[RMDB]
RNA sequence: GGGAACGACUCGAGUAGAGUCGAAAAAUCAGAGGGCGCUAUCAUGCAAACUAGGAUUGUCUGCUCAUGCACAGAACCAACUACCGAUAACUAACAGUGCAUGAGGGUUAGUUAUUCCAUAUUAAUUAAAACUCGUAAUUCUUCGGAAUUACGAGAAGUCGUAUCAGGUGUUCGCACCUGAUACGACAAAAGAAACAACAACAACAAC
Reactivity to 2A3 in 0.01 (KOAc 150mM, MgCl2 10mM, bicine 150mM(pH8.5), 24C), signal-to-noise 1, nucleotides 027 to 156: a000u030c030a030g000a000g030g010g000c000g000c010u100a100u300c110a090u300g000c010a030a060a040c030u010a040g000g050a060u020u000g050u060c030u050g010c010u010c000a000u010g030c010a050c000a010g060a120a050c040c040a030a110c060u300a130c000c120g050a120u060a060a020c010u000a030a000c040a050g000u000g000c030a000u000g000a000g000g000g000u010u020a010g010u030u050a020u130u000c020c000a030u100a060u240u280a120a150u090u160a040a090a040a080c000u000c000g010u000a000a000u010u000c000u010u030c190g030g000a000a000u000u000a000c000g000a000g000a000a000
The record gives the reactivity of an RNA of 207 nucleotides to 2A3. Conditions: 150 mM KOAc, 10 mM MgCl2 and 150 mM bicine (pH 8.5), 24 C. Reactivities are given for positions 27 through 156. The 2A3 profile rests on 503 reads.